An RNA of 207 nucleotides, treated with 2A3 and read out base by base. The reactions ran in a buffer of 150 mM KOAc, 10 mM MgCl2 and 150 mM bicine (pH 8.5), at 24 C. 2A3 adducts were read by reverse transcription with SuperScript II with manganese. For 2A3, 1,401 sequencing reads were counted.
RNA sequence: GGGAACGACUCGAGUAGAGUCGAAAAUGUGCACACAUUUGUAUAUGUGUGUGUUGAUGUGUUUGUAUGUAUGCAUGUGUGUGGACUAUGUGCAAGUGUGUGCAAUGUAUGUGGACUGUGUGCAUGUGUGGACUGUGUGUAUGUGUGUGCAUGUGUACUAUCGCAUGCACUUCGGUGCAUGCGAUAGAAAAGAAACAACAACAACAAC
Reactivity to 2A3 in 0.01 (KOAc 150mM, MgCl2 10mM, bicine 150mM(pH8.5), 24C), signal-to-noise 2, nucleotides 027 to 156: u220g030u030g020c010a000c000a000c000a000u040u060u030g200u060a050u030a030u050g080u010g030u020g020u000g020u090u060g060a150u030g030u040g040u030u140u080g110u040a130u030g040u000a000u050g030c150a030u050g020u000g030u000g080u060g070g030a050c060u120a080u090g050u040g020c020a050a000g030u020g000u030g000u000g010c010a020a010u070g030u030a050u080g030u030g000g060a000c050u040g000u010g000u010g000c050a060u080g000u000g020u050g090g040a040c040u020g010u000g010u000g040u040a020u080g020u020g020u000g010u020g030c010a050u020g020u030g000u020a030